[RMDB]
Source: RMDB library TTRDEL, as collected in RNAgym. The record gives the reactivity of an RNA of 177 nucleotides to DMS.
RNA sequence: GGGAACGACUCGAGUAGAGUCGAAAAGAUAUGGACCCGAGGCGAUAAGCUGGUGUCGGAAACGACACCCAGCUUUUGACGCGCAGGGUCCUAAGUCAAAAGUGAUAUUGCUUCGGCAAUAUCACAAGUCUUCUAUAGGCUUCGGCCUAUAGAAGACAAAAGAAACAACAACAACAAC
Reactivity to DMS in 0.01 (KOAc 150mM, MgCl2 10mM, bicine 150mM(pH8.5), 24C), signal-to-noise 2, nucleotides 027 to 126: g000a030u020a290u020g030g000a030c010c010c000g000a300g000g000c000g010a110u000a030a000g030c000u000g010g000u010g000u010c020g000g000a080a020a160c000g010a010c000a010c140c120c030a000g010c000u000u000u020u010g010a210c050g000c020g000c020a300g000g010g010u000c000c010u000a000a080g000u000c020a100a040a160a080g010u000g000a010u010a000u000u000g020c010u000u010c180g030g000c020a000a000u000a010u000c000a000c010a050a110
The RNA was probed in 150 mM KOAc, 10 mM MgCl2 and 150 mM bicine (pH 8.5) at 24 C.